[RMDB]
RNA sequence: GGGAACGACUCGAGUAGAGUCGAAAAUCAAGCGCGGGGAGUCAAACGGGCACGACCCGAAACCCGGUGAUCUACGCGUGGGCAAGGUGAAGCAUGGCGAAAGCCAUGUGGAGGCCUGUUAGGGUUGUCAAAAAAAAUGAUUCGUCAUUUUUUUUGAAAAAGAAACAACAACAACAAC
Reactivity to 2A3 in 0.01 (KOAc 150mM, MgCl2 10mM, bicine 150mM(pH8.5), 24C), signal-to-noise 4, nucleotides 027 to 126: u130c020a030a020g010c010g000c000g010g030g000g030a070g110u100c040a070a090a130c020g000g000g020c090a030c140g200a150c000c020c030g070a060a030a010c000c000c000g010g010u030g010a020u010c020u060a030c020g000c010g040u050g000g040g000c050a070a070g020g020u070g030a000a000g000c000a000u000g000g000c020g050a090a010a000g000c000c000a000u000g000u000g000g000a020g070g060c000c020u010g020u030u080a080g050g010g000u020u070g030
Reactivity to DMS in 0.01 (KOAc 150mM, MgCl2 10mM, bicine 150mM(pH8.5), 24C), signal-to-noise 9, nucleotides 027 to 126: u040c050a100a160g010c020g010c010g010g000g000g010a070g010u020c050a020a100a120c020g000g000g000c230a110c140g010a110c090c040c050g010a030a090a170c010c000c010g000g020u010g010a080u010c040u010a040c030g000c020g010u010g010g020g010c100a070a030g000g000u000g000a280a190g000c000a000u000g000g010c010g010a110a090a190g000c000c000a000u000g000u000g000g000a200g000g000c010c000u000g000u010u010a130g000g010g010u010u020g000
Notes
Conditions: 150 mM KOAc, 10 mM MgCl2 and 150 mM bicine (pH 8.5), 24 C. Structure probing data (2A3 and DMS) for a 177-nucleotide construct. The 2A3 profile rests on 3,891 reads. For 2A3 the reverse transcriptase was SuperScript II with manganese.